[RMDB]
RNA sequence: GGGAACGACUCGAGUAGAGUCGAAAACAAUCUUACCAUCACCAAAUCAGAUUUAGAUCUUCUGGUGAUUAUUUCGGAGUGUGUAAACUAAAAGCGAGUUACUUGACGAAGAAUCGCAUGAUCACUGGGUGAUUAUAAUCUUCGGAUUAUAAUUACCAAAAGAAACAACAACAACAAC
Reactivity to DMS in 0.01 (KOAc 150mM, MgCl2 10mM, bicine 150mM(pH8.5), 24C), signal-to-noise 9, nucleotides 027 to 126: c120a100a080u010c100u000u010a140c150c100a060u000c010a020c010c010a020a080a070u010c210a030g010a060u000u010u010a120g010a080u000c020u000u010c100u000g010g020u000g000a020u000u000a070u000u000u000c100g000g010a100g010u000g010u000g010u010a060a060a120c120u000a060a050a100a130g010c050g000a050g010u000u010a070c030u000u010g010a130c240g010a090a040g000a080a080u000c030g010c040a080u010g000a070u000c050a060c100u000g010
Reactivity to 2A3 in 0.01 (KOAc 150mM, MgCl2 10mM, bicine 150mM(pH8.5), 24C), signal-to-noise 9, nucleotides 027 to 126: c020a020a100u060c030u110u120a070c020c020a020u020c010a010c020c000a020a070a120u190c050a040g030a080u080u100u280a140g030a140u020c010u100u010c030u060g010g020u010g030a010u030u100a090u030u100u070c070g050g020a040g020u030g000u010g020u090a070a100a080c040u060a070a080a100a030g040c020g010a010g030u040u040a110c010u050u080g130a080c100g070a060a020g020a060a040u010c020g000c040a040u090g030a060u090c020a010c100u070g090